RNA sequence: GGGAACGACUCGAGUAGAGUCGAAAAGCACCAAACGGAUGGUACUAAACUAUUCAUGAGAAAUUUGCCCCAUGAUCAAAUCACCUUCCACCAGGUCCCACCUCCAAAAGUGGGGAUUACAUUUCAACAUGACAUUUGGGCUAGGACACAUAUCCAACGUUUUAGCCAUAUUCGUAUGGCUAAAACGAAAAGAAACAACAACAACAAC
Reactivity to 2A3 in 0.01 (KOAc 150mM, MgCl2 10mM, bicine 150mM(pH8.5), 24C), signal-to-noise 4, nucleotides 027 to 156: g040c030a020c050c000a050a040a050c100g000g010a030u020g010g000u060a060c070u120a060a200a100c040u090a080u130u070c040a060u070g040a020g110a140a110a080u130u120u160g040c000c010c010c000a020u060g050a110u100c060a060a090a110u100c040a070c020c000u050u060c040c060a060c030c020a040g000g010u010c010c010c010a030c000c020u140c050c030a090a080a050a000g030u060g000g000g000g020a000u030u160a050c010a040u040u070u090c030a090a080c020a060u060g090a000c020a040u100u070u110g050g020g000c030u050a050g010g020a030c030a010c000a070u130a060u150c070c020a040a040
Reactivity to DMS in 0.01 (KOAc 150mM, MgCl2 10mM, bicine 150mM(pH8.5), 24C), signal-to-noise 1, nucleotides 027 to 156: g010c040a050c020c000a080a100a250c080g020g010a110u010g000g030u040a110c070u000a050a140a060c040u000a130u000u000c050a060u010g010a300g000a120a030a170u000u000u000g030c070c000c000c010a050u000g060a070u000c040a040a030a160u000c050a060c030c030u010u000c020c030a100c050c030a030g020g050u010c060c010c000a000c030c010u000c020c110a060a070a080a220g070u000g020g020g030g020a050u000u000a080c130a150u000u030u000c050a010a060c020a060u010g000a050c050a190u000u000u000g050g070g000c000u020a060g000g010a080c040a050c000a080u030a190u000c050c000a060a210